This 177-nucleotide RNA was probed chemically with DMS and 2A3. For DMS, 25,134 sequencing reads were counted. For 2A3 the reverse transcriptase was SuperScript II with manganese.
[RMDB]
RNA sequence: GGGAACGACUCGAGUAGAGUCGAAAAAGCAACGAGUGUGUGUGGGACGUUUUAUCCCAAGCUCUGAGUAGAGCACGCGCUCACACACACCGCGAGCGAGCAUCAGCACAGCGCAAACGCUGGUAAACUACGUAUACUGUUUCGACAGUAUACGUAGAAAAGAAACAACAACAACAAC
Reactivity to DMS in 0.01 (KOAc 150mM, MgCl2 10mM, bicine 150mM(pH8.5), 24C), signal-to-noise 9, nucleotides 027 to 126: a100g010c040a190a050c020g010a250g020u000g010u000g020u000g020u000g000g000g000a070c010g010u010u010u010u010a130u010c040c040c050a080a110g010c000u000c000u000g010a170g020u010a060g010a010g020c010a100c110g010c060g010c000u000c000a010c000a000c000a010c010a010c010c010g010c040g000a170g010c010g000a110g010c120a070u010c070a060g000c070a130c050a050g000c050g010c160a070a100a110c100g010c000u000g000g000u000a050a070a170
Reactivity to 2A3 in 0.01 (KOAc 150mM, MgCl2 10mM, bicine 150mM(pH8.5), 24C), signal-to-noise 9, nucleotides 027 to 126: a000g060c050a040a050c020g020a100g060u000g000u000g000u000g000u010g000g000g040a040c010g000u020u060u130u180a160u110c020c030c010a020a010g000c000u010c010u070g300a240g170u300a020g170a000g000c010a000c030g030c010g000c000u000c000a000c000a000c000a000c000a000c000c000g050c020g010a020g000c010g010a020g020c020a060u090c030a020g040c040a020c010a070g030c030g010c120a160a070a050c080g000c010u010g010g010u080a050a070a030
Reactivities are given for positions 27 through 126. For DMS the reverse transcriptase was MarathonRT.